This 207-nucleotide RNA was probed chemically with 2A3. The RNA was probed in 150 mM KOAc, 10 mM MgCl2 and 150 mM bicine (pH 8.5) at 24 C. The data come from the RNA Mapping Database (RMDB), library M2RFPK.

RNA sequence: GGGAACGACUCGAGUAGAGUCGAAAAGCCUCCUCGCUUCCAUAGAAAGGGGACGGGGCAGAUCGCAAGUGCUACAACCGAGCGGUGGUGUCUGUCAAACUAAGCAGCCACUGCACAUCAAUUGACUAAACGAUGCCGAUCUUCGGAUCGGCAUCAACCAGUUCUUACACUUCGGUGUAAGAACUGGAAAAGAAACAACAACAACAAC
Reactivity to 2A3 in 0.01 (KOAc 150mM, MgCl2 10mM, bicine 150mM(pH8.5), 24C), signal-to-noise 1, nucleotides 027 to 156: g020c000c000u050c040c040u000c020g000c060u050u000c050c020a070u090a300g220a070a130a020g050g010g010g000a010c010g000g000g020g030c000a000g070a160u180c080g000c100a100a010g070u060g090c040u120a050c060a140a020c070c060g050a040g060c010g010g000u030g000g000u020g000u000c030u010g140u200c070a090a060a110c070u070a050a020g080c010a010g010c010c020a010c000u040g070c030a030c000a070u140c050a030a200u110u190g050a110c120u090a070a100a000c110g010a000u000g020c000c000g000a000u000c030u040u070c240g070g000a010u000c000g000g000c000a000u000c000a010a000